Notes
The data come from the RNA Mapping Database (RMDB), library RFM100. The record gives the reactivity of an RNA of 177 nucleotides to 2A3. For 2A3, 418 sequencing reads were counted. The RNA was probed in 150 mM KOAc, 10 mM MgCl2 and 150 mM bicine (pH 8.5) at 24 C.

RNA sequence: GGGAACGACUCGAGUAGAGUCGAAAAUUUGUGGCAAUGAACUAAAUACAGAUUUUUUUUUUUAAGGAAACCAAAUUAAGUCUAAAACCUGUGGCAAAUUUGUACUUUCUCCUUAAAUUACAUUGCUACACAUACACGUGUUCGCACGUGUAUGUGUAAAAGAAACAACAACAACAAC
Reactivity to 2A3 in 0.01 (KOAc 150mM, MgCl2 10mM, bicine 150mM(pH8.5), 24C), signal-to-noise 1, nucleotides 027 to 126: u060u060u160g080u060g000g040c000a010a000u040g030a040a030c060u150a040a190a110u220a100c040a030g130a080u080u030u070u000u000u000u000u070u000u000u020a040a000g040g000a050a000a000c000c000a000a000a000u000u000a210a000g000u000c020u070a100a090a220a280c010c080u180g000u140g160g000c010a040a040a040u000u020u040g040u060a080c050u080u070u020c080u000c000c000u000u000a000a040a000u010u000a000c010a010u000u000g010c000u030